[RMDB]
RNA sequence: GGGAACGACUCGAGUAGAGUCGAAAACCACGAUGUCAAGGCCCGCAUCGAGGAAUUCAACGCAUUGGCCGGUCAUGAGCACGUGCACAAGGGGAUGACCAGCCGCGACCUGACCGAGAACGUGGAGGUCUUGUUUGAGAUUCGUCUCAAACAAGACAAAAGAAACAACAACAACAAC
Reactivity to 2A3 in 0.01 (KOAc 150mM, MgCl2 10mM, bicine 150mM(pH8.5), 24C), signal-to-noise 5, nucleotides 027 to 126: c010c000a030c050g030a060u080g040u140c050a110a060g090g030c010c000c020g020c030a070u050c020g030a060g040g060a040a070u220u130c070a160a090c060g030c060a070u090u230g000g030c050c000g010g000u040c020a030u060g060a040g060c030a030c220g130u190g000c060a050c060a280a110g030g030g010g030a040u070g010a020c000c000a000g020c000c020g020c010g000a040c000c020u030g030a040c010c030g000a020g000a090a040c030g020u060g020g070a070g080
Reactivity to DMS in 0.01 (KOAc 150mM, MgCl2 10mM, bicine 150mM(pH8.5), 24C), signal-to-noise 4, nucleotides 027 to 126: c010c000a260c090g000a050u010g010u000c050a130a140g030g010c020c010c090g040c050a060u000c030g010a120g000g000a070a130u010u000c060a090a110c070g030c050a140u010u000g000g010c000c030g010g020u000c040a030u000g000a100g010c050a110c140g010u000g000c080a070c110a060a070g010g010g010g010a090u000g010a070c010c010a060g000c000c010g030c040g000a050c060c030u000g000a080c050c060g010a110g020a090a090c080g020u000g010g030a110g030